[RMDB]
RNA sequence: GGGAACGACUCGAGUAGAGUCGAAAACAAACUUUAAAUAUGUAAGAAGCCCUUGUUACUUAAGUGAACGUGGGCAUUAGAAUGGAUCGUUACUAGUGGGCCAUUUUUGGUAAGCAGAACUGGCGAUGAAUAUCAGGGUAUUCGUACCCUGAUAUUCAAAAGAAACAACAACAACAAC
Reactivity to 2A3 in 0.01 (KOAc 150mM, MgCl2 10mM, bicine 150mM(pH8.5), 24C), signal-to-noise 5, nucleotides 027 to 126: c010a000a060a040c010u060u180u240a070a110a060u300a080u170g100u100a080a050g040a200a040g030c000c000c000u020u120g040u030u040a160c020u110u180a110a210g090u130g220a000a000c010g010u020g000g020g000c000a040u020u130a020g050a090a040u090g070g090a050u050c030g030u050u040a030c020u030a070g080u050g060g030g000c000c000a020u040u060u010u020u030g100g000u130a090a040g140c010a000g000a060a030c020u040g020g000c030g010a050u060
Reactivity to DMS in 0.01 (KOAc 150mM, MgCl2 10mM, bicine 150mM(pH8.5), 24C), signal-to-noise 4, nucleotides 027 to 126: c060a070a080a110c100u000u010u020a070a090a180u030a070u030g010u020a070a080g000a180a120g010c000c010c000u000u010g020u000u000a030c010u010u020a150a110g020u010g000a020a000c020g000u010g000g010g000c010a050u020u030a040g010a130a040u010g000g010a070u000c050g020u000u000a080c060u000a110g030u000g000g000g010c000c020a030u010u000u010u000u020g000g010u010a070a160g030c030a030g000a030a030c070u000g010g010c020g020a090u000

Annotation:
Conditions: 150 mM KOAc, 10 mM MgCl2 and 150 mM bicine (pH 8.5), 24 C. The record gives the reactivity of an RNA of 177 nucleotides to 2A3 and DMS. Reactivities are given for positions 27 through 126. DMS adducts were read by reverse transcription with MarathonRT. High 2A3 reactivity points to a flexible backbone, as in loops and unpaired stretches.